[RMDB]
Background
Source: RMDB library OK3TST, as collected in RNAgym. This 207-nucleotide RNA was probed chemically with 2A3 and DMS. The 2A3 profile rests on 8,607 reads. 2A3 adducts were read by reverse transcription with SuperScript II with manganese. The DMS profile rests on 8,403 reads. Values cover nucleotides 27 to 156.

RNA sequence: GGGAACGACUCGAGUAGAGUCGAAAACACCUUUGGGACCCUUAAGCUCUUGGUCCAUAAGUGGUUAAACUCGAAGGGAAGGGUUUAAUAAGGUUUACCACUCUUUAAUGUCUUUGUCUGUACAUGGAAGGGAGGAUGUUCCAGAGGGUAUUAAGGGCUAGAUAUAGUGAUUCGUCAUUGUGUCUAGAAAAGAAACAACAACAACAAC
Reactivity to 2A3 in 0.01 (KOAc 150mM, MgCl2 10mM, bicine 150mM(pH8.5), 24C), signal-to-noise 3, nucleotides 027 to 156: c040a020c000c000u020u020u020g020g010g010a010c000c000c000u010u020a020a010g010c000u000c010u020u030g040g040u000c000c000a010u040a030a020g050u040g020g040u040u100a020a020a010c010u010c050g030a050a040g020g010g000a010a010g000g010g000u000u020u030a040a020u050a020a020g030g000u010u030u060a020c000c000a020c010u010c000u010u030u030a040a010u020g010u000c010u010u090u090g060u010c030u030g030u030a010c000a010u010g030g020a000a000g000g000g010a010g010g010a010u030g000u010u000c000c000a000g000a000g040g010g000u020a070u030u050a030a030g010g010g000
Reactivity to DMS in 0.01 (KOAc 150mM, MgCl2 10mM, bicine 150mM(pH8.5), 24C), signal-to-noise 3, nucleotides 027 to 156: c040a110c010c020u010u000u000g030g000g010a070c020c020c030u000u000a040a100g010c000u000c020u000u000g010g020u000c030c010a080u000a050a070g020u000g030g030u000u010a050a060a040c010u000c020g000a160a130g010g010g000a170a140g020g010g020u000u000u000a030a070u000a080a090g010g000u000u000u010a100c020c020a090c020u000c030u010u000u000a070a050u000g020u000c040u010u000u000g010u000c100u010g020u000a060c030a050u000g000g010a060a080g000g010g010a090g010g010a070u000g010u000u000c010c030a100g000a060g010g010g010u000a050u000u000a040a070g010g010g010